Conditions: 150 mM KOAc, 10 mM MgCl2 and 150 mM bicine (pH 8.5), 24 C. An RNA of 177 nucleotides, treated with DMS and 2A3 and read out base by base. DMS adducts were read by reverse transcription with MarathonRT. For 2A3, 745 sequencing reads were counted. Values cover nucleotides 27 to 126.
RNA sequence: GGGAACGACUCGAGUAGAGUCGAAAAAUAGCCUUGCAAUUGCGUCGUCAAACUUAUAUUCCUCAGCUCUCCUUAUUGCAUUGUUUAUGAUGCAUGCAAGUAUAUAGCAGUUCUUAAGGUUAUGGGAAAUGACCAGUCGUUUCGACGACUGGUCAUUAAAAGAAACAACAACAACAAC
Reactivity to DMS in 0.01 (KOAc 150mM, MgCl2 10mM, bicine 150mM(pH8.5), 24C), signal-to-noise 1, nucleotides 027 to 126: a030u030a000g010c060c000u000u020g000c140a060a050u010u000g000c040g110u000c070g000u000c140a100a050a080c010u020u030a090u030a050u020u000c020c000u020c020a020g000c090u000c000u000c080c020u010u090a000u000u030g050c020a040u020u010g010u010u020u020a110u000g000a020u000g000c100a010u000g000c100a090a000g010u040a030u010a010u060a080g000c170a060g000u000u000c020u000u020a090a090g000g000u000u000a060u010g000g000g020a010
Reactivity to 2A3 in 0.01 (KOAc 150mM, MgCl2 10mM, bicine 150mM(pH8.5), 24C), signal-to-noise 2, nucleotides 027 to 126: a000u030a000g030c000c000u060u100g000c010a060a150u020u020g010c000g010u020c010g090u070c070a000a170a000c080u250u040a020u000a030u290u090c030c000u060c090a070g040c110u040c000u030c000c000u000u120a090u060u020g000c010a010u050u050g020u000u240u120a300u300g030a080u090g000c050a000u000g000c000a020a010g140u050a010u000a000u080a160g020c060a000g000u000u090c020u110u190a160a130g020g040u020u030a000u080g180g000g000a030